[RMDB]
An RNA of 177 nucleotides, treated with DMS and 2A3 and read out base by base. 2A3 adducts were read by reverse transcription with SuperScript II with manganese. For 2A3, 1,021 sequencing reads were counted.
RNA sequence: GGGAACGACUCGAGUAGAGUCGAAAAAUAAGGUCACGGUUGGUGCCCUUGUUGCUAAUGAAGGUAGGGAAGCUUCCGAAGAUGCACUGACUGCUGUAAUUACUGCAGCCUAUUUAACCAUUUGUCAGUACCGCUAAUGGUUCGCCAUUAGCGGUACAAAAGAAACAACAACAACAAC
Reactivity to DMS in 0.01 (KOAc 150mM, MgCl2 10mM, bicine 150mM(pH8.5), 24C), signal-to-noise 2, nucleotides 027 to 126: a050u000a040a070g000g010u000c030a040c020g000g000u010u010g020g020u000g020c090c040c030u000u000g000u010u000g010c050u010a070a130u020g010a100a070g020g010u000a070g010g000g000a110a080g000c070u000u010c030c040g000a080a100g010a060u000g020c060a060c070u000g000a020c030u010g000c040u000g000u020a230a100u010u000a050c070u000g010c020a040g000c010c080u000a010u000u000u000a040a170c070c010a100u000u000u000g010u000c070a160
Reactivity to 2A3 in 0.01 (KOAc 150mM, MgCl2 10mM, bicine 150mM(pH8.5), 24C), signal-to-noise 2, nucleotides 027 to 126: a010u040a000a020g040g000u050c040a000c100g080g190u150u170g020g010u040g000c010c000c010u000u060g040u060u060g010c040u070a080a080u210g040a140a010g100g000u110a060g020g010g090a040a040g060c010u010u000c030c010g020a020a030g090a020u140g010c050a000c060u030g010a020c030u020g000c050u030g060u150a150a210u140u110a110c040u080g000c010a010g040c000c000u050a070u030u060u040a070a020c010c000a060u130u100u080g160u040c060a060